[RMDB]
RNA sequence: GGGAACGACUCGAGUAGAGUCGAAAAGAUAUGGACCUAUGUACCGGGACAACAGCUCGGAAACGAGACAUGUCCGUACUAGGUCCUAAGUCAAAGAGAUUGGAUCAGUUCGCUGAUCCAAUCUCAAGUCUCUACAACGGUUCGCCGUUGUAGAGACAAAAGAAACAACAACAACAAC
Reactivity to 2A3 in 0.01 (KOAc 150mM, MgCl2 10mM, bicine 150mM(pH8.5), 24C), signal-to-noise 2, nucleotides 027 to 126: g040a000u050a050u150g000g010a010c010c000u020a080u300g000u010a020c110c190g190g020g030a020c030a170a040c040a090g050c000u020c010g000g000a060a060a050c010g020a010g040a050c060a150u100g010u000c000c000g010u000a000c000u010a000g000g000u040c000c000u000a000a000g010u010c000a000a040a090g000a010g010a000u020u000g030g010a000u000c000a010g090u080u120c180g080c210u020g000a010u010c000c000a010a000u000c000u000c000a000a000
Reactivity to DMS in 0.01 (KOAc 150mM, MgCl2 10mM, bicine 150mM(pH8.5), 24C), signal-to-noise 2, nucleotides 027 to 126: g000a040u020a300u010g000g000a010c000c000u010a020u020g000u000a000c110c240g040g070g000a010c010a010a110c280a170g000c000u000c000g000g000a090a060a180c010g010a000g020a010c080a120u010g010u000c010c020g000u000a020c020u000a000g000g010u000c000c010u000a010a020g000u000c050a070a100a110g000a000g000a030u010u000g040g000a020u000c000a000g080u000u000c250g030c010u020g020a000u010c000c000a000a000u000c000u000c000a090a050